The record gives the reactivity of an RNA of 177 nucleotides to DMS and 2A3. The reactions ran in a buffer of 150 mM KOAc, 10 mM MgCl2 and 150 mM bicine (pH 8.5), at 24 C. Source: RMDB library OK2TST, as collected in RNAgym. The 2A3 profile rests on 3,893 reads. 2A3 adducts were read by reverse transcription with SuperScript II with manganese.
RNA sequence: GGGAACGACUCGAGUAGAGUCGAAAACUUCGUGGGAGCCGCCUCAUCCCCAUGAGUGCGACGGCAAGUCGGGAAAAACCUUCCAGACAAAGCAGGGAGUCACCCUCCUGUCCAGAUCAGGAGGGAGUACAGAAGAUACGUUCGCGUAUCUUCUGUAAAAAGAAACAACAACAACAAC
Reactivity to DMS in 0.01 (KOAc 150mM, MgCl2 10mM, bicine 150mM(pH8.5), 24C), signal-to-noise 4, nucleotides 027 to 126: c050u000u000c060g030u000g020g010g000a150g020c040c030g000c020c010u000c030a060u010c070c040c040c100a170u010g000a030g030u000g050c020g020a050c040g000g000c080a120a190g010u000c010g010g000g000a030a020a060a150a110c230c110u000u000c000c020a060g000a050c030a080a100a110g000c040a100g010g020g000a060g000u000c100a130c000c010c000u000c000c000u010g000u010c140c160a090g000a080u000c010a040g000g000a040g010g000g000a030g010
Reactivity to 2A3 in 0.01 (KOAc 150mM, MgCl2 10mM, bicine 150mM(pH8.5), 24C), signal-to-noise 2, nucleotides 027 to 126: c010u060u050c020g120u060g020g030g020a050g030c030c010g030c000c020u050c010a060u120c020c010c020c010a030u040g020a010g060u150g020c050g040a100c020g040g010c050a050a040g010u000c000g000g000g040a000a050a030a040a050c010c020u040u000c010c010a010g010a080c030a020a090a000g060c020a010g000g000g030a030g010u020c030a070c010c010c000u000c000c000u010g020u080c050c070a160g030a300u140c000a000g000g010a000g030g000g000a000g010